This 177-nucleotide RNA was probed chemically with 2A3 and DMS.
For 2A3 the reverse transcriptase was SuperScript II with manganese.
Values cover nucleotides 27 to 126.
2A3 is a SHAPE reagent: it acylates the 2'-hydroxyl of flexible nucleotides of all four kinds.
The data come from the RNA Mapping Database (RMDB), library OK2TRN.
DMS adducts were read by reverse transcription with MarathonRT.
The reactions ran in a buffer of 150 mM KOAc, 10 mM MgCl2 and 150 mM bicine (pH 8.5), at 24 C.
RNA sequence: GGGAACGACUCGAGUAGAGUCGAAAACUCGCAUCGACUUGAUCCUUGGCAGUACAUCGUCAUGCGAAAUUCAAUGAUCGCUAGGAUCCUACUGCGGAGCGAAUGUUUCGCGGUUUCGCACUCAGCGUGCUCAUGGUACAUUCGUGUACCAUGAGCAAAAAGAAACAACAACAACAAC
Reactivity to 2A3 in 0.01 (KOAc 150mM, MgCl2 10mM, bicine 150mM(pH8.5), 24C), signal-to-noise 4, nucleotides 027 to 126: c020u010c010g020c000a030u030c050g080a040c050u030u120g020a010u030c020c000u070u090g030g000c050a060g030u170a060c020a150u060c070g000u000c020a020u050g010c060g060a120a050a020u120u060c040a040a090u200g020a050u060c060g000c040u050a020g050g030a080u020c000c030u050a010c000u010g000c010g010g000a010g000c050g140a300a150u300g020u000u010u010c010g000c000g010g000u050u140u100c030g000c030a030c030u130c040a040g040c040g060
Reactivity to DMS in 0.01 (KOAc 150mM, MgCl2 10mM, bicine 150mM(pH8.5), 24C), signal-to-noise 4, nucleotides 027 to 126: c060u000c020g010c060a080u000c100g020a060c020u000u010g000a080u000c030c020u000u000g020g000c080a080g010u000a130c200a080u010c120g010u000c040a050u000g000c020g000a030a070a130u000u000c160a110a070u000g000a060u010c060g000c030u020a070g010g010a060u010c030c170u000a020c030u000g040c020g020g010a030g020c000g000a130a070u030g020u000u000u000c030g010c030g010g000u000u000u000c070g010c130a070c070u010c090a080g010c100g030